[RMDB]
RNA sequence: GGGAACGACUCGAGUAGAGUCGAAAAUAAACAAUUAUCUCUAUCAAAAAAUACCUAUCAAGAAGCAGUCCCUUCCCGUUUUACUUGCAGGGGUAUCAGUUUUUUAAAUCAGGGGUAUCGUGCAAGAGAUCUAUUUACUUUUCGAAGUAAAUAGAUCAAAAGAAACAACAACAACAAC
Reactivity to 2A3 in 0.01 (KOAc 150mM, MgCl2 10mM, bicine 150mM(pH8.5), 24C), signal-to-noise 1, nucleotides 027 to 126: u080a000a120a000c040a010a120u080u040a130u130c010u020c010u060a080u190c070a000a200a150a040a040a120u130a100c020c040u080a070u180c020a040a080g030a100a000g100c090a020g070u060c000c000c000u020u030c020c000c000g000u050u090u160u210a030c000u000u010g020c000a000g300g000g000g000u000a010u030c000a000g060u000u030u000u030u120u300a070a240a040u090c040a010g010g110g000g210u000a010u040c020g010u030g020c000a000a000g070a040
Reactivity to DMS in 0.01 (KOAc 150mM, MgCl2 10mM, bicine 150mM(pH8.5), 24C), signal-to-noise 2, nucleotides 027 to 126: u010a110a080a170c050a110a070u000u020a040u000c040u010c020u000a120u010c020a000a030a120a110a070a100u000a050c040c020u000a060u000c080a030a100g020a100a080g010c020a060g000u010c010c000c000u000u000c020c010c000g010u020u000u030u020a130c010u000u000g000c050a030g000g030g030g000u000a000u010c010a090g000u000u000u000u010u020u020a000a040a080u020c140a050g020g020g020g020u000a010u000c000g000u010g010c040a020a050g000a190